[RMDB]
RNA sequence: GGGAACGACUCGAGUAGAGUCGAAAAAGAGGAGGCUGGGUUUUGCGAUCUUUAAGCAGAUGGCAGGUUCACCCCGUACGGUGCGGAAGUUCGCGCUUCCGUGAAACGCGAAAAUCGAACGGUGGCUAAGACCAAUAACAGUUCGCUGUUAUUGGAACGUACUCAACAUGUUCGCAUGUUGAGUACGAAAAGAAACAACAACAACAAC
Reactivity to 2A3 in 0.01 (KOAc 150mM, MgCl2 10mM, bicine 150mM(pH8.5), 24C), signal-to-noise 4, nucleotides 027 to 156: a000g060a030g040g010a020g000g030c070u040g050g030g010u000u050u080u120g000c010g030a030u020c030u080u150u140a130a030g010c020a010g030a090u050g050g020c030a000g040g000u060u090c030a050c010c020c000c000g010u020a030c030g010g030u070g010c000g000g000a010a010g010u100u210c040g000c040g010c080u010u000c000c000g020u020g030a130a080a010c070g010c020g060a040a030a000a050u070c010g010a010a020c040g020g050u100g020g000c000u070a060a030g030a050c000c000a000a000u010a010a000c000a000g030u080u090c230g030c090u000g000u000u000a010u000u010g000g000a000a020
Reactivity to DMS in 0.01 (KOAc 150mM, MgCl2 10mM, bicine 150mM(pH8.5), 24C), signal-to-noise 2, nucleotides 027 to 156: a060g020a120g010g020a090g020g030c050u010g020g000g030u040u000u010u010g040c040g000a060u000c050u000u000u020a090a130g020c110a060g010a060u010g010g000c050a040g030g000u000u000c080a120c010c000c000c020g030u000a070c070g010g020u000g000c000g010g030a060a070g010u010u000c220g040c220g010c020u000u010c010c080g000u000g000a040a070a050c000g000c030g000a060a070a060a120u000c060g020a140a040c030g020g010u010g000g000c010u000a090a110g000a210c000c000a000a030u010a020a030c000a010g020u000u000c290g040c060u000g010u000u000a010u010u030g010g020a020a060